[RMDB]
RNA sequence: GGGAACGACUCGAGUAGAGUCGAAAAGAUAUGGACGUCUUGUCCUGCAGCAAACCCUGUGACAAGAGAUGGUCUCGGAAACGAGACCAUCUCUUGUUGAAAAUGCAGGUCAAGAGCGUCCUAAGUCCUUAUAAGCAAGGUUCGCCUUGCUUAUAAGAAAAGAAACAACAACAACAAC
Reactivity to DMS in 0.01 (KOAc 150mM, MgCl2 10mM, bicine 150mM(pH8.5), 24C), signal-to-noise 4, nucleotides 027 to 126: g000a130u010a260u000g010g000a010c000g010u000c010u000u000g020u010c000c000u000g000c000a030g000c280a150a110a170c060c080c060u010g010u010g000a000c000a010a000g000a010g000a010u000g000g010u000c000u000c010g010g000a110a100a230c010g000a010g010a010c000c000a000u000c000u000c000u000u000g000u010u000g000a090a060a080a080u000g000c000a000g000g000u000c000a000a020g020a070g020c010g000u000c000c000u000a020a130g000u000c070